[RMDB]
RNA sequence: GGGAACGACUCGAGUAGAGUCGAAAACCCGUUCAUUUCGAUGAACGGGAGUGGGUAACCCUACGACCAGUAGUGGGACCCGUAGUGGCCGUGGGACCAGUAAAGAGUUAACAUUCGUGUUAACUAAAAGAGUAAUAUUUUUCGAAAUAUUACUCUUAAAAGAAACAACAACAACAAC
Reactivity to 2A3 in 0.01 (KOAc 150mM, MgCl2 10mM, bicine 150mM(pH8.5), 24C), signal-to-noise 5, nucleotides 027 to 126: c000c000c000g000u000u000c000a010u010u050u150c210g130a020u010g000a000a000c000g010g050g000a030g080u160g020g010g000u060a140a180c000c000c000u010a010c020g190a210c050c150a050g010u020a010g020u230g030g000g040a030c000c010c010g000u060a080g050u040g040g000c050c040g030u060g030g040g030a090c020c020a020g030u120a020a180a080g160a020g020u010u000a010a000c020a010u030u120c120g040u040g000u040u000a000a000c000u020a090a140
Reactivity to DMS in 0.01 (KOAc 150mM, MgCl2 10mM, bicine 150mM(pH8.5), 24C), signal-to-noise 8, nucleotides 027 to 126: c000c000c000g010u000u000c000a000u000u000u010c160g020a030u000g000a010a010c010g000g000g010a060g010u000g000g010g010u000a050a130c050c020c010u000a020c010g010a150c180c130a130g010u000a030g010u010g030g000g000a070c030c020c010g010u010a030g010u000g000g010c020c020g010u000g010g010g010a080c040c030a090g000u010a070a100a120g000a040g000u000u000a000a010c000a040u000u010c210g020u000g010u000u000a000a010c000u000a040a060